Conditions: 150 mM KOAc, 10 mM MgCl2 and 150 mM bicine (pH 8.5), 24 C.
Chemical mapping of a 177-nucleotide RNA with 2A3 and DMS.
It was measured as part of the RMDB library OK1LIB.
DMS adducts were read by reverse transcription with MarathonRT.
For 2A3, 4,976 sequencing reads were counted.
RNA sequence: GGGAACGACUCGAGUAGAGUCGAAAACAGUUGAAGCUGAACAAGUUUAUCGGGUGCCACAUCUGCAAGGUGCGCUACAACCGCCUCCACCCGUACUACUACAGUAUGUGCCACCUCUGCGGCGAGAGCCGCUCGUAUACUUCGGUAUACGAGCGGCAAAAGAAACAACAACAACAAC
Reactivity to 2A3 in 0.01 (KOAc 150mM, MgCl2 10mM, bicine 150mM(pH8.5), 24C), signal-to-noise 7, nucleotides 027 to 126: c040a030g030u100u100g180a080a030g030c030u040g020a030a040c050a190a100g060u080u160u120a170u160c060g020g030g000u030g080c070c000a040c000a070u040c030u070g030c060a100a060g060g000u050g010c050g000c030u060a080c050a100a060c040c030g020c010c020u070c030c000a030c020c030c010g000u020a030c020u010a020c000u040a010c020a020g100u190a040u110g050u050g050c020c010a010c010c010u050c060u090g030c020g030g010c030g000a060g020a010
Reactivity to DMS in 0.01 (KOAc 150mM, MgCl2 10mM, bicine 150mM(pH8.5), 24C), signal-to-noise 3, nucleotides 027 to 126: c080a100g000u000u000g000a030a180g020c020u030g010a090a090c200a100a120g010u020u010u010a100u000c160g020g020g040u030g000c140c000a020c020a010u010c040u000g000c030a040a060g000g000u020g030c050g000c080u000a060c120a120a080c120c050g000c030c030u000c040c020a060c050c110c000g000u020a050c020u000a080c130u040a210c050a010g010u010a000u010g040u000g000c190c020a070c030c040u000c080u010g000c030g000g010c030g000a080g010a150

Annotation: 2A3 adducts were read by reverse transcription with SuperScript II with manganese.